[RMDB]
RNA sequence: GGGAACGACUCGAGUAGAGUCGAAAAACUUUUAGCGUUUGCAAGACGCUGUUCUUGCAAUGAUCUGGAUUUAGCGCACGGAGGUCCGAAAUCCAGAUCAACAUUUCGGACCUGCGCGCUAAUAAAACAGUAUAGGAGCAUUCGUGCUCCUAUACUGAAAAGAAACAACAACAACAAC
Reactivity to 2A3 in 0.01 (KOAc 150mM, MgCl2 10mM, bicine 150mM(pH8.5), 24C), signal-to-noise 3, nucleotides 027 to 126: a000c050u150u090u110u160a060g040c030g040u020u030u050g010c010a000a000g000a010c030g070c300u140g100u120u000c010u000u010g010c020a020a020u050g050a110u070c060u100g110g010a080u050u010u030a000g000c010g010c010a020c110g130g120a020g000g020u000c000c010g010a000a010a010u050c080c040a060g010a180u080c000a000a010c000a010u000u000u000c010g000g000a000c010c000u080g010c010g000c000g020c010u000a020a000u030a000a060a010a010
Reactivity to DMS in 0.01 (KOAc 150mM, MgCl2 10mM, bicine 150mM(pH8.5), 24C), signal-to-noise 5, nucleotides 027 to 126: a080c080u000u000u000u000a070g010c060g000u000u000u000g000c010a020a010g000a020c010g020c260u010g010u010u000c000u000u000g000c000a010a030u000g000a120u000c060u000g000g000a170u010u000u000a010g010c020g020c040a080c110g030g020a030g010g010u000c000c000g010a000a010a010u000c160c140a140g010a120u010c170a070a060c190a030u000u000u000c000g000g000a020c000c010u000g000c040g010c010g000c000u000a010a010u000a050a060a060a130